[RMDB]
RNA sequence: GGGAACGACUCGAGUAGAGUCGAAAAGAUAUGGAGGACGACGAUCAACCGACCGAAGAACAAACAUUUAUGGCUCGGAAACGAGCCAUAAAUGUUUGGGAGGUCUGUUGGGAGUCCUCCUAAGUCAGAGCCAUAAUAAGUUCGCUUAUUAUGGCUCAAAAGAAACAACAACAACAAC
Reactivity to DMS in 0.01 (KOAc 150mM, MgCl2 10mM, bicine 150mM(pH8.5), 24C), signal-to-noise 2, nucleotides 027 to 126: g010a060u010a300u000g000g000a000g000g000a000c000g030a120c260g000a100u020c020a000a020c000c100g000a010c000c020g020a140a200g000a160a280c010a000a000a010c000a010u000u000u000a010u010g000g000c000u010c000g000g000a100a110a170c000g010a000g050c000c000a010u000a000a000a010u000g000u000u000u000g000g000g010a140g010g010u000c000u010g010u000u010g000g000g010a060g010u000c000c010u000c010c010u000a000a060g000u020c060a140
Structure probing data (DMS) for a 177-nucleotide construct. It was measured as part of the RMDB library TTRINS. The RNA was probed in 150 mM KOAc, 10 mM MgCl2 and 150 mM bicine (pH 8.5) at 24 C. For DMS the reverse transcriptase was MarathonRT.